[RMDB]
RNA sequence: GGGAACGACUCGAGUAGAGUCGAAAAUCAGAGAGGAAGAGAGUCAGAGCUCUGAAGAGCUGACUUCCUUCCUGACUCUCUGAGAGAAGCUCUUCAGAGGAGAAGUCAGCUCUUCCUCUGACUGAAGAGCUUCGACUGACUCUAGCUCUGACUGAUCAUCCCCUUUCCUAUUCGUAGGAAAGGGGAUAAAAGAAACAACAACAACAAC
Reactivity to 2A3 in 0.01 (KOAc 150mM, MgCl2 10mM, bicine 150mM(pH8.5), 24C), signal-to-noise 2, nucleotides 027 to 156: u010c000a010g010a010g010a030g060g040a100a060g100a030g020a000g050u000c020a010g020a050g080c040u000c040u190g140a200a080g000a010g020c020u030g020a010c000u110u050c040c020u040u020c000c030u030g000a020c020u030c010u000c050u060g020a020g000a000g010a100a030g010c000u010c000u060u030c020a010g010a040g030g020a050g000a010a010g010u110c070a040g000c060u020c000u050u000c010c030u050c030u060g140a230c010u000g000a010a020g000a000g030c000u060u050c060g040a030c000u040g000a020c000u010c000u010a030g080c010u010c030u040g030a040c030u050g060a090u120c020
Reactivity to DMS in 0.01 (KOAc 150mM, MgCl2 10mM, bicine 150mM(pH8.5), 24C), signal-to-noise 1, nucleotides 027 to 156: u010c020a000g020a050g020a140g000g010a060a080g000a120g060a080g000u020c010a060g010a050g020c040u000c090u030g000a100a060g000a070g010c030u010g000a070c030u010u000c030c010u010u000c040c030u020g010a110c120u000c000u010c010u030g000a110g010a180g000a130a040g000c090u000c010u000u000c010a030g010a300g000g000a050g000a060a010g000u000c020a130g000c050u000c010u000u010c020c030u000c030u000g000a220c060u020g000a030a040g010a000g030c000u020u000c060g030a140c020u000g000a060c020u000c020u000a090g020c000u000c010u000g070a110c020u000g010a180u000c050